[RMDB]
RNA sequence: GGGAACGACUCGAGUAGAGUCGAAAAAGACCUGCCCUUCGCCUGGUUCGUGGCGCCUUGUGACCCCGGGCCCCUGCCGCCUGCAAGUCGGAAAUUGCGCUGUGCUCCUGUGCUACGGCCUGUGGCUUGAAAAGUGACAGUUCGCUGUCACUUUUCAAAAAGAAACAACAACAACAAC
Reactivity to DMS in 0.01 (KOAc 150mM, MgCl2 10mM, bicine 150mM(pH8.5), 24C), signal-to-noise 2, nucleotides 027 to 126: a070g000a080c030c020u010g000c030c030c000u000u000c060g000c010c040u000g000g000u020u010c090g020u000g030g020c050g030c070c030u010u000g030u020g010a080c080c040c040c040g030g000g000c050c020c000c030u000g000c000c010g000c030c020u000g040c080a010a050g040u000c060g000g010a090a100a140u000u030g000c010g020c000u000g000u000g000c030u000c000c040u000g040u060g000c070u000a090c100g000g000c010c010u000g020u020g010g010c060u000
Reactivity to 2A3 in 0.01 (KOAc 150mM, MgCl2 10mM, bicine 150mM(pH8.5), 24C), signal-to-noise 3, nucleotides 027 to 126: a020g060a050c000c010u030g010c000c000c000u050u060c030g050c020c010u060g070g000u090u040c020g050u070g050g020c010g010c020c020u060u050g070u070g060a090c000c010c010c040g050g000g000c000c020c000c000u060g010c010c020g000c000c010u020g040c020a050a040g050u060c020g010g050a010a090a070u100u110g010c030g010c020u020g010u080g030c010u010c040c020u040g010u040g040c000u020a020c000g030g000c000c010u050g020u020g010g000c000u010
Structure probing data (DMS and 2A3) for a 177-nucleotide construct. DMS adducts were read by reverse transcription with MarathonRT. Reactivities are given for positions 27 through 126. The data come from the RNA Mapping Database (RMDB), library RFM100. 2A3 adducts were read by reverse transcription with SuperScript II with manganese. The RNA was probed in 150 mM KOAc, 10 mM MgCl2 and 150 mM bicine (pH 8.5) at 24 C. In probing experiments dimethyl sulfate is read out at A N1 and C N3, which are open when not base-paired.